[RMDB]
Chemical mapping of a 207-nucleotide RNA with 2A3. The data come from the RNA Mapping Database (RMDB), library M2RFPK. Conditions: 150 mM KOAc, 10 mM MgCl2 and 150 mM bicine (pH 8.5), 24 C.
RNA sequence: GGGAACGACUCGAGUAGAGUCGAAAAACUGACGGUACGCCGUCAGAACGGUAGAAAAGAUGGUUUGAAAACCACGCCUUCUACCAAUAUAGUAAUUAAAUAGGCGGAGCGGUCAUACGUGACCGCAAAAACAUAUUCAGCUUCGGCUGAAUAUGAAGCUCAUACAACUCUUCGGAGUUGUAUGAGCAAAAGAAACAACAACAACAAC
Reactivity to 2A3 in 0.01 (KOAc 150mM, MgCl2 10mM, bicine 150mM(pH8.5), 24C), signal-to-noise 2, nucleotides 027 to 156: a010c010u010g000a010c010g010g010u020a050c270g070c030c010g000u000c000a000g000a030a000c070g020g000u000a000g020a000a030a000a000g100a280u000g000g040u000u110u260g120a150a100a000a000c000c000a010c000g000c000c000u040u000c000u010a000c000c000a000a000u100a000u000a050g070u060a050a130u140u080a060a080a110u110a040g000g030c020g000g000a000g010c000g000g000u030c020a040u050a130c160g110u070g000a020c000c020g000c020a000a000a000a000a000c000a000u000a000u000u000c000a000g000c000u000u080c160g090g000c010u020g000a000a000u000a000u000g000a040a020